[RMDB]
RNA sequence: GGGAACGACUCGAGUAGAGUCGAAAAAUCUGGAUUGAAUCCCCCCCUUUGCUAAUAAUCUUAAGGAAAUCAUGAUCUGUUUGAAUGUCACCCUUAACGGUGGAUAGUAAUACUUGGGUCAAGAUGGGACGUCUUAUAAUUUCGAUUAUAAGACGUCAAAAGAAACAACAACAACAAC
Reactivity to 2A3 in 0.01 (KOAc 150mM, MgCl2 10mM, bicine 150mM(pH8.5), 24C), signal-to-noise 2, nucleotides 027 to 126: a020u060c070u090g100g080a150u070u250g110a170a300u100c030c010c010c020c000c000c010u020u080u080g000c000u020a020a010u050a080a040u080c010u080u050a080a050g070g030a070a080a000u040c010a020u010g020a020u010c010u020g100u130u050u070g060a060a030u140g020u020c000a020c000c030c000u030u070a050a010c070g000g000u000g000g060a000u010a020g020u000a020a020u020a120c030u020u140g040g020g000u020c040a030a020g030a030u050g070g130
Reactivity to DMS in 0.01 (KOAc 150mM, MgCl2 10mM, bicine 150mM(pH8.5), 24C), signal-to-noise 5, nucleotides 027 to 126: a070u000c080u000g020g010a070u000u010g010a130a300u000c020c000c010c000c010c010c020u000u000u000g010c100u010a050a070u000a090a070u010c030u010u000a070a100g000g000a100a150a040u000c020a080u010g010a030u000c020u010g000u000u000u000g010a090a090u010g000u000c040a040c050c000c020u000u020a070a140c220g000g020u000g000g000a050u010a040g010u000a040a060u010a040c080u010u010g000g000g010u000c010a020a040g010a040u000g000g010